[RMDB]
Conditions: 150 mM KOAc, 10 mM MgCl2 and 150 mM bicine (pH 8.5), 24 C.
This 177-nucleotide RNA was probed chemically with DMS and 2A3.
For 2A3 the reverse transcriptase was SuperScript II with manganese.
Values cover nucleotides 27 to 126.
DMS adducts were read by reverse transcription with MarathonRT.
Source: RMDB libraries RFM100 and RFMREP, as collected in RNAgym.
RNA sequence: GGGAACGACUCGAGUAGAGUCGAAAAACGCAGCAUACGUGCUGCGAACUUUGGUGGAACCUAGUGUUAGUGUUGUGCUGUAAAUAAGUGUCCAGCGCACCACUAGUCACCAGGUGUCACCGGAGAAGGGAUUAGAGAGAUUCGUCUCUCUAAUCCCAAAAGAAACAACAACAACAAC
Reactivity to DMS in 0.01 (KOAc 150mM, MgCl2 10mM, bicine 150mM(pH8.5), 24C), signal-to-noise 2, nucleotides 027 to 126: a120c050g000c000a000g020c000a030u010a080c210g030u000g010c000u020g030c000g010a020a020c010u000u000u000g020g020u010g000g000a100a030c000c010u000a040g020u000g000u000u000a000g000u000g000u020u000g000u000g020c000u000g000u000a120a090a110u010a180a150g030u030g020u030c160c010a010g020c010g010c000a000c040c000a000c000u000a000g000u000c000a000c000c030a010g030g000u000g010u000c010a000c000c020g040g000a000g010a160a100
Reactivity to 2A3 in 0.01 (KOAc 150mM, MgCl2 10mM, bicine 150mM(pH8.5), 24C), signal-to-noise 8, nucleotides 027 to 126: a010c020g000c010a000g010c000a000u040a070c230g130u050g000c000u000g010c000g000a030a020c000u010u020u010g010g000u010g010g020a020a010c000c000u000a010g000u000g010u010u010a000g000u000g010u010u000g010u010g000c000u020g050u150a090a110a130u180a300a140g150u120g090u160c080c000a000g000c000g000c000a000c000c000a000c000u010a010g040u060c000a000c010c000a000g000g000u010g050u010c000a000c000c000g010g000a020g010a040a160